RNA sequence: GGGAACGACUCGAGUAGAGUCGAAAAGAAAGAAAGAAAGAGCUCCUGUCUGGGCUUCACAAUAGUCGAAUACCUUAAAUUUCAAAAUUUGGAUAUUCGUUGUUGAUGAAGCCUUGAUGGGGGUGAAUCCCCGAAUGUAUUUCGAUACAUUCGGGGAAAAAGAAACAACAACAACAAC
Reactivity to DMS in 0.01 (KOAc 150mM, MgCl2 10mM, bicine 150mM(pH8.5), 24C), signal-to-noise 1, nucleotides 027 to 126: g020a120a120a120g010a150a110a110g000a090a240a110g010a300g040c000u010c000c030u000g020u000c000u000g040g000g000c000u000u000c000a000c010a000a000u000a000g000u050c000g010a020a000u010a000c000c000u000u010a020a010a040u020u000u040c220a050a070a070a060u000u000u000g000g000a060u000a000u000u000c010g000u000u000g000u000u010g000a040u000g000a000a000g000c000c000u000u000g000a000u000g040g030g000g000g000u000g000a070a080
Reactivity to 2A3 in 0.01 (KOAc 150mM, MgCl2 10mM, bicine 150mM(pH8.5), 24C), signal-to-noise 3, nucleotides 027 to 126: g090a020a080a010g050a020a090a000g060a030a150a010g050a020g020c010u000c010c000u020g020u000c000u000g010g010g000c010u000u000c000a000c000a010a010u020a030g140u230c000g000a000a000u000a020c010c000u100u220a060a040a070u130u200u170c150a180a160a080a080u040u010u020g040g010a100u020a000u000u000c000g000u000u020g000u000u020g040a270u000g000a020a000g000c000c000u000u000g000a000u000g000g000g000g010g000u010g000a000a020

The record gives the reactivity of an RNA of 177 nucleotides to DMS and 2A3. DMS adducts were read by reverse transcription with MarathonRT. The 2A3 profile rests on 1,557 reads. 2A3 adducts were read by reverse transcription with SuperScript II with manganese. The RNA was probed in 150 mM KOAc, 10 mM MgCl2 and 150 mM bicine (pH 8.5) at 24 C.